[RMDB]
RNA sequence: GGGAACGACUCGAGUAGAGUCGAAAAGAUAUGGAUUUCCUAUACACGCUAUAAUCUUGCUCGGAAACGAGCAAGGUAGCGUUGAUAGGAGAAUCCUAAGUCAAACGAUCAUUCUUCGGAAUGAUCGGCCCGUAAACACCUUCGGGUGUUUACGGGCAAAAGAAACAACAACAACAAC
Reactivity to DMS in 0.01 (KOAc 150mM, MgCl2 10mM, bicine 150mM(pH8.5), 24C), signal-to-noise 1, nucleotides 027 to 126: g000a000u000a300u000g000g020a000u000u000u000c000c000u000a000u000a130c000a060c030g010c000u000a030u020a300a150u010c000u000u000g040c000u010c000g000g000a110a120a240c020g020a000g000c000a000a000g020g020u000a010g020c010g000u000u030g030a000u000a000g020g000a050g060a020a050u000c000c010u010a090a090g020u020c000a090a080a300c110g010a000u000c000a010u000u000c010u000u010c300g050g010a000a000u000g000a000u000c010g030
Reactivity to 2A3 in 0.01 (KOAc 150mM, MgCl2 10mM, bicine 150mM(pH8.5), 24C), signal-to-noise 1, nucleotides 027 to 126: g050a070u130a080u150g030g000a030u000u030u000c000c010u000a000u040a040c000a010c010g000c010u070a040u090a300a280u150c010u020u000g030c000u010c020g010g030a030a230a150c020g000a020g000c000a010a000g030g000u000a000g020c000g010u020u170g040a020u020a010g050g000a040g180a000a050u010c010c030u050a140a000g050u060c070a170a080a060c060g010a000u000c000a000u020u000c000u030u100c300g130g010a000a000u000g000a000u020c020g000
Structure probing data (DMS and 2A3) for a 177-nucleotide construct. The data come from the RNA Mapping Database (RMDB), library TTRDES.